[RMDB]
RNA sequence: GGGAACGACUCGAGUAGAGUCGAAAAGACCGAAAAGGUCACUCCAUAAGUAACUGAUGACCGGCUAUCUCGCCCAUGGCGGCUAACAUUAUUAUUGAAGGAAAUUAGACAUGUCCAACAUGAUCAAAGGUCAAGUGAAGUGGUUCAACGAAGCUAAAGGUUUUGGUUUCAUCACUCCAGCAGACGGCAGCAAAGAUGUAUUCGUGCACUUCUCUGCUAUCCAGGAUCAAGGCUUCAAGACUCUGGUUGAAGGCCAGAACGUACAAACCUAGAUGUUCGCAUCUAGGAAAAGAAACAACAACAACAAC
Reactivity to 2A3 in 0.01 (KOAc 150mM, MgCl2 10mM, bicine 150mM(pH8.5), 24C), signal-to-noise 1, nucleotides 027 to 266: g000a000c000c000g050a090a190a090a080g030g000u010c020a030c000u020c000c030a070u110a230a120g050u030a070a070c030u050g140a050u220g030a140c040c020g000g000c060u150a300u160c180u150c110g020c000c010c000a070u080g120g050c090g020g020c020u080a100a060c050a020u050u140a050u300u080a010u050u300g100a080a140g060g010a070a120a050u050u020a020g090a100c010a030u130g010u070c080c000a010a000c010a150u090g020a080u060c080a070a070a050g070g000u000c010a000a030g050u010g060a000a000g020u020g010g010u030u060c020a070a060c140g000a010a020g000c050u090a030a000a180g050g030u000u030u030u050g010g010u080u180u040c050a040u060c000a020c190u070c040c000a020g050c000a010g020a040c070g020g000c010a000g080c030a070a040a030g030a130u040g060u170a130u070u220c110g100u040g020c030a010c080u110u000c010u030c000u100g010c000u000a020u010c010c070a010g000g040a000u020c050a000a080g020g000c000u010u010c010a000a000g000a040c050u000c020u070g000g030u020u080g090a080a040g140g020c010c020a050g050a020a070c040g070u130a090c090a080a100a000
Reactivity to DMS in 0.01 (KOAc 150mM, MgCl2 10mM, bicine 150mM(pH8.5), 24C), signal-to-noise 2, nucleotides 027 to 266: g010a000c000c010g010a140a070a160a160g000g040u000c000a140c090u000c010c070a090u000a230a120g000u010a090a060c130u020g000a110u000g000a040c050c000g040g020c020u000a060u010c080u010c130g020c070c030c170a110u000g030g030c140g000g000c080u000a070a070c050a050u000u000a130u020u000a020u020u020g010a080a190g000g000a030a020a060u020u030a080g010a130c090a030u000g010u020c120c090a040a230c110a060u000g000a060u000c100a050a120a070g020g020u000c010a040a040g000u010g000a100a130g020u010g000g000u020u010c060a090a040c150g010a020a010g000c030u000a040a120a090g020g020u000u000u010u000g000g000u000u000u000c090a070u000c070a050c160u010c090c060a080g000c090a090g000a030c230g000g000c090a050g040c090a070a020a070g010a040u000g030u000a060u000u030c060g020u000g000c020a060c030u010u000c100u000c000u000g000c000u010a040u010c000c010a030g000g030a020u010c010a020a300g010g000c030u000u010c000a060a190g000a120c080u000c010u020g010g010u000u000g010a180a050g000g000c000c020a090g000a010a040c140g000u000a090c210a070a060a140

The record gives the reactivity of an RNA of 307 nucleotides to 2A3 and DMS. Values are in units of 0.01, from 0 to 300, in steps of 10. The reactions ran in a buffer of 150 mM KOAc, 10 mM MgCl2 and 150 mM bicine (pH 8.5), at 24 C. High 2A3 reactivity points to a flexible backbone, as in loops and unpaired stretches. Source: RMDB library POS240, as collected in RNAgym.